Background:
The data come from the RNA Mapping Database (RMDB), library OK2TST. The record gives the reactivity of an RNA of 177 nucleotides to DMS and 2A3.

[RMDB]
RNA sequence: GGGAACGACUCGAGUAGAGUCGAAAAGUAAAGUUAGUGCAGUCUUAUUAUCAGGCCGGUAUUUAUCUCUAGGGUGGAGAUCCGUCCCGAAUGCUGUCUGGUUCUGUCAUUCAUGAAUGCCAUGGGAAUAUUUAGUGCUGUUCGCAGCACUAAAUAUAAAAGAAACAACAACAACAAC
Reactivity to DMS in 0.01 (KOAc 150mM, MgCl2 10mM, bicine 150mM(pH8.5), 24C), signal-to-noise 4, nucleotides 027 to 126: g010u000a050a090a110g010u010u000a050g020u000g010c040a050g010u000c050u010u010a070u010u000a070u010c070a050g010g010c050c030g020g010u010a040u010u000u010a060u010c020u000c040u000a110g000g030g010u000g010g000a060g000a050u010c080c050g000u000c010c020c020g010a050a060u010g000c030u000g000u010c050u000g010g010u000u000c040u000g000u000c060a070u010u000c050a050u010g010a070a080u000g000c060c030a050u010g010g010g010a130
Reactivity to 2A3 in 0.01 (KOAc 150mM, MgCl2 10mM, bicine 150mM(pH8.5), 24C), signal-to-noise 2, nucleotides 027 to 126: g050u070a070a080a030g000u040u170a020g000u030g090c020a000g030u080c040u110u150a170u090u060a070u110c010a000g030g000c030c010g030g000u050a090u020u110u050a070u040c050u000c040u110a090g120g060g070u070g070g000a030g000a070u030c010c010g040u030c010c000c000g010a030a010u080g010c010u000g020u090c030u030g030g000u050u070c020u030g060u030c010a050u090u030c010a030u100g160a190a030u100g080c040c040a040u030g040g030g040a070
Background
The reactions ran in a buffer of 150 mM KOAc, 10 mM MgCl2 and 150 mM bicine (pH 8.5), at 24 C. Values cover nucleotides 27 to 126.